[RMDB]
RNA sequence: GGGAACGACUCGAGUAGAGUCGAAAAACGCAGGUGUAGCCGCUGUUGGUGCUGCGUACCAUGGUGGUCUUGAGGGCUGCGGCCUGGAAUCGCGCGGCCACGAAGUGCUGGACCUGGGCGGAGACCGCACCUUCCUGCACUUCGGUGCAGGAAGGUGAAAAGAAACAACAACAACAAC
Reactivity to DMS in 0.01 (KOAc 150mM, MgCl2 10mM, bicine 150mM(pH8.5), 24C), signal-to-noise 2, nucleotides 027 to 126: a090c050g000c030a010g010g020u000g000u010a090g020c010c020g000c100u000g010u010u010g020g000u020g010c030u000g020c040g020u000a080c030c020a080u000g010g020u010g010g030u000c040u000u020g030a160g000g000g000c010u010g030c090g030g010c060c060u010g010g010a090a110u000c130g010c040g010c040g020g010c030c030a050c040g000a070a060g000u000g010c000u000g020g000a050c070c050u000g020g010g020c010g010g010a120g000a160c040c050g000
Reactivity to 2A3 in 0.01 (KOAc 150mM, MgCl2 10mM, bicine 150mM(pH8.5), 24C), signal-to-noise 2, nucleotides 027 to 126: a000c060g000c030a030g090g000u200g090u220a020g010c020c010g000c130u080g170u160u080g020g000u070g070c060u060g010c050g000u030a030c000c010a030u140g090g000u050g000g040u020c030u140u190g160a270g000g030g000c000u030g000c050g090g030c010c020u030g050g120a140a060u160c030g000c000g010c000g030g000c010c000a000c000g050a110a020g020u090g100c020u020g020g070a030c010c010u030g070g060g000c000g050g020a050g020a020c000c010g010